[RMDB]
The data come from the RNA Mapping Database (RMDB), library RFM100. Chemical mapping of a 177-nucleotide RNA with 2A3 and DMS. Reactivities are given for positions 27 through 126. The DMS profile rests on 996 reads.
RNA sequence: GGGAACGACUCGAGUAGAGUCGAAAACAAUUAUAUCGGAAGAUUUUGAAGUCAUAGUUUUCCUAUCGUAGUGUGCAAUAAAAACCGUUCUACUGCCACACGGGUACUGGCCUUGAAGCUGUAUCGGCCUGAUCAAUCGGUUCGCCGAUUGAUCAGGAAAAGAAACAACAACAACAAC
Reactivity to 2A3 in 0.01 (KOAc 150mM, MgCl2 10mM, bicine 150mM(pH8.5), 24C), signal-to-noise 2, nucleotides 027 to 126: c000a010a050u290u100a060u030a020u190c050g020g000a060a000g020a050u000u080u140u280g210a160a050g080u030c050a030u090a020g000u000u040u050u000c020c040u070a070u210c050g050u000a140g050u000g000u060g160c020a030a120u150a240a080a010a030a050c010c020g000u000u130c030u020a030c000u050g010c000c000a010c000a010c110g000g000g000u010a020c050u040g040g000c010c000u000u050g070a140a000g090c060u030g000u030a080u140c020g000g000
Reactivity to DMS in 0.01 (KOAc 150mM, MgCl2 10mM, bicine 150mM(pH8.5), 24C), signal-to-noise 1, nucleotides 027 to 126: c020a200a090u030u030a070u050a090u030c070g010g000a170a030g000a050u000u000u030u060g000a140a160g000u040c190a070u010a030g000u000u000u000u000c000c000u000a120u020c040g000u010a130g020u000g070u000g060c050a190a070u060a050a100a010a090a110c080c180g030u000u030c020u000a050c050u010g000c030c000a010c040a110c070g000g000g000u040a030c000u000g020g000c160c040u000u000g060a050a100g030c080u000g070u000a010u000c120g000g030